[RMDB]
Overview:
An RNA of 177 nucleotides, treated with DMS and 2A3 and read out base by base. The RNA was probed in 150 mM KOAc, 10 mM MgCl2 and 150 mM bicine (pH 8.5) at 24 C. 2A3 adducts were read by reverse transcription with SuperScript II with manganese. For DMS, 914 sequencing reads were counted.

RNA sequence: GGGAACGACUCGAGUAGAGUCGAAAAGAUAUGGAGAUGUAGCAACAGCAUGUUCAUCGGAAACGAUGACAUGACAUGCUACGCUCCUAAGUCAAAAUCGUGUAAUAGGUUCGCCUAUUACACGAAACUCUUUCGUGUCGUUCGCGACACGAAAGAGAAAAGAAACAACAACAACAAC
Reactivity to DMS in 0.01 (KOAc 150mM, MgCl2 10mM, bicine 150mM(pH8.5), 24C), signal-to-noise 1, nucleotides 027 to 126: g010a000u000a260u010g000g000a000g000a060u000g030u010a010g030c040a020a170c300a110g020c010a000u000g000u020u000c000a020u010c010g000g000a100a040a100c000g000a010u000g000a020c000a010u000g000a030c060a130u010g050c000u000a000c000g000c000u000c000c010u010a000a120g010u020c020a140a030a110a130u000c000g060u000g000u040a000a000u000a000g040g000u000u010c290g010c000c000u000a000u000u000a010c000a000c000g000a000a030a140
Reactivity to 2A3 in 0.01 (KOAc 150mM, MgCl2 10mM, bicine 150mM(pH8.5), 24C), signal-to-noise 2, nucleotides 027 to 126: g000a030u030a080u140g010g010a010g060a180u170g050u000a010g010c020a020a290c150a180g110c000a060u020g070u230u210c000a000u000c010g000g000a020a000a000c000g000a010u000g010a000c010a000u010g110a120c000a020u020g000c000u000a010c000g030c010u000c020c000u000a040a020g010u040c030a000a000a020a300u040c000g010u000g000u000a000a010u000a000g020g030u030u070c300g150c050c000u000a000u020u000a000c000a000c000g000a000a010a020